[RMDB]
RNA sequence: GGGAACGACUCGAGUAGAGUCGAAAACCAACGUGGUUCGCCACGUUGGAAACUACAAAUACUGUCAGUUGAGACAGACACAAAAACUGUCAGUGUAGACAGAAAGGCGGUCCUUCGGGACCGCCAAGAGUAAAAAUCACUUCGGUGAUUUUUACUCAAAAGAAACAACAACAACAAC
Reactivity to 2A3 in 0.01 (KOAc 150mM, MgCl2 10mM, bicine 150mM(pH8.5), 24C), signal-to-noise 1, nucleotides 027 to 126: c000c000a000a010c000g000u010g000g080u030u050c170g100c100c000a010c000g000u000u020g000g050a030a030a000c020u020a030c040a030a260a100u120a140c010u000g020u000c000a060g070u110u100g060a040g010a090c030a070g060a060c090a000c030a120a170a010a010a010c000u010g000u010c000a000g080u030g030u110a020g020a030c020a020g130a130a010a030g010g020c010g050g040u010c030c000u060u090c160g110g000g000a010c000c000g000c020c000a010a000
Reactivity to DMS in 0.01 (KOAc 150mM, MgCl2 10mM, bicine 150mM(pH8.5), 24C), signal-to-noise 1, nucleotides 027 to 126: c000c000a010a000c000g030u000g000g000u000u010c160g010c020c000a000c000g000u000u010g000g010a040a040a200c030u000a020c110a100a100a120u000a080c000u000g010u000c000a090g000u010u000g000a280g000a060c080a010g000a130c290a100c050a020a080a070a030a080c010u000g020u000c000a100g000u000g000u000a080g010a100c070a050g000a090a110a030g000g010c020g040g000u000c010c000u000u000c150g010g010g020a000c000c000g000c000c000a000a000
Chemical mapping of a 177-nucleotide RNA with 2A3 and DMS.
The RNA was probed in 150 mM KOAc, 10 mM MgCl2 and 150 mM bicine (pH 8.5) at 24 C.
For DMS the reverse transcriptase was MarathonRT.